Source: RMDB library TTRDES, as collected in RNAgym. Chemical mapping of a 177-nucleotide RNA with DMS and 2A3. 2A3 adducts were read by reverse transcription with SuperScript II with manganese. The 2A3 profile rests on 2,590 reads. The reactions ran in a buffer of 150 mM KOAc, 10 mM MgCl2 and 150 mM bicine (pH 8.5), at 24 C.

[RMDB]
RNA sequence: GGGAACGACUCGAGUAGAGUCGAAAAGAUAUGGAUCCCGAGGCUUCAACAGCAUUAGUCGGAAACGACUAAUGACAUGAAGCUCGAGGAUCCUAAGUCAAAACCUCAGAAGUUCGCUUCUGAGGAACGUGUCACUAAUCUUCGGAUUAGUGACACGAAAAGAAACAACAACAACAAC
Reactivity to DMS in 0.01 (KOAc 150mM, MgCl2 10mM, bicine 150mM(pH8.5), 24C), signal-to-noise 2, nucleotides 027 to 126: g010a010u010a300u000g010g030a040u000c010c000c020g030a080g040g000c010u000u000c000a040a180c300a180g040c000a000u000u000a000g010u000c000g010g010a120a110a170c010g020a010c000u000a000a000u000g000a030c110a160u010g010a000a010g010c000u010c010g010a110g030g030a000u000c000c000u010a020a110g000u000c060a090a100a080a140c010c000u000c000a000g000a010a000g020u010u000c300g000c020u000u000c000u010g000a000g010g050a000a060
Reactivity to 2A3 in 0.01 (KOAc 150mM, MgCl2 10mM, bicine 150mM(pH8.5), 24C), signal-to-noise 2, nucleotides 027 to 126: g020a000u110a030u180g000g020a000u000c000c000c010g020a120g210g080c030u070u050c050a100a130c060a210g000c000a000u000u000a020g030u000c000g010g040a110a080a050c000g000a000c010u010a010a000u000g060a020c010a060u150g080a000a010g000c020u030c000g070a290g020g000a010u000c000c000u020a060a000g000u000c020a000a060a180a260c000c000u000c000a000g000a030a000g020u100u300c300g030c190u020u010c000u010g010a000g000g000a000a010